[RMDB]
RNA sequence: GGGAACGACUCGAGUAGAGUCGAAAAGAUAUGGAGAAGAUCUUUUGACGUUCGACGAUUCGGAAACGAAUCCAAGAACGAUAAGAUCCUCCUAAGUCAAAGGAAGGUUGGUUCGCCAACCUUCCAACUAAUAAGCUCACUUCGGUGAGCUUAUUAGAAAAGAAACAACAACAACAAC
Reactivity to 2A3 in 0.01 (KOAc 150mM, MgCl2 10mM, bicine 150mM(pH8.5), 24C), signal-to-noise 3, nucleotides 027 to 126: g040a030u090a040u170g020g010a030g030a300a130g010a040u030c010u030u090u060u120g280a170c060g000u000u000c010g020a010c030g000a020u000u010c010g000g000a020a080a060c010g000a000a010u020c000c000a060a020g010a000a000c000g000a010u010a010a000g000a000u000c010c010u000c000c010u020a140a040g040u050c060a180a040a090g000g000a010a000g020g020u010u020g040g020u060u250c300g040c060c000a000a010c010c000u000u000c000c010a000a000
Reactivity to DMS in 0.01 (KOAc 150mM, MgCl2 10mM, bicine 150mM(pH8.5), 24C), signal-to-noise 6, nucleotides 027 to 126: g000a050u000a300u000g010g010a020g000a120a130g010a000u000c000u000u000u000u010g020a200c070g010u000u000c000g010a300c300g010a020u000u000c000g000g000a080a070a180c000g010a000a000u000c000c010a040a300g000a010a010c000g020a070u000a010a000g000a010u000c010c020u000c000c000u000a030a130g000u000c050a070a100a130g000g010a020a000g000g010u000u000g010g010u010u010c230g010c000c010a000a020c000c000u000u000c010c010a010a060